[RMDB]
RNA sequence: GGGAACGACUCGAGUAGAGUCGAAAAGAGAGCGCUCACGCCCAUCCCGUCUAUGACUGUAUGGAUGAUAAUCACUGGAACGGACGCGUGCUCACUCAGUGGUGAGCCUGGAGUGAGGGAUGGCGGUAGCUUGUGAUUACAUUGGUGUCCGCGCUACGUAAAUGAUUAGUUUCGACUAAUCAUUUACAAAAGAAACAACAACAACAAC
Reactivity to DMS in 0.01 (KOAc 150mM, MgCl2 10mM, bicine 150mM(pH8.5), 24C), signal-to-noise 5, nucleotides 027 to 156: g010a170g010a060g020c030g020c040u010c070a080c040g020c030c010c020a050u000c010c020c030g030u000c050u010a060u010g020a090c060u010g050u000a130u010g020g010a120u010g010a140u010a070a090u000c020a050c020u000g020g010a090a120c040g020g000a070c020g030c050g020u000g010c010u000c000a050c010u000c020a180g020u010g010g030u000g000a080g010c040c030u010g020g010a080g020u000g010a090g020g010g010a070u000g040g010c040g000g010u000a110g020c040u010u000g020u000g010a160u000u000a060c060a180u010u000g020g010u000g010u000c020c030g020c070g020c050u000a070c200
Reactivity to 2A3 in 0.01 (KOAc 150mM, MgCl2 10mM, bicine 150mM(pH8.5), 24C), signal-to-noise 9, nucleotides 027 to 156: g170a000g010a010g010c050g000c020u020c030a030c020g010c030c010c000a010u020c010c010c010g020u010c050u100a170u220g080a100c060u070g050u200a080u120g040g030a020u040g030a050u110a080a030u040c020a010c050u040g010g060a080a050c040g040g120a030c010g020c020g080u100g020c000u000c000a000c000u050c040a090g060u100g200g080u120g080a030g070c000c010u080g050g060a040g010u030g010a020g000g020g030a030u040g050g010c010g000g020u040a020g010c010u040u040g030u020g020a020u030u080a060c060a120u030u160g060g000u030g020u020c040c030g020c010g000c020u050a040c080
This 207-nucleotide RNA was probed chemically with DMS and 2A3. The DMS profile rests on 20,234 reads. For DMS the reverse transcriptase was MarathonRT. 2A3 adducts were read by reverse transcription with SuperScript II with manganese. The RNA was probed in 150 mM KOAc, 10 mM MgCl2 and 150 mM bicine (pH 8.5) at 24 C.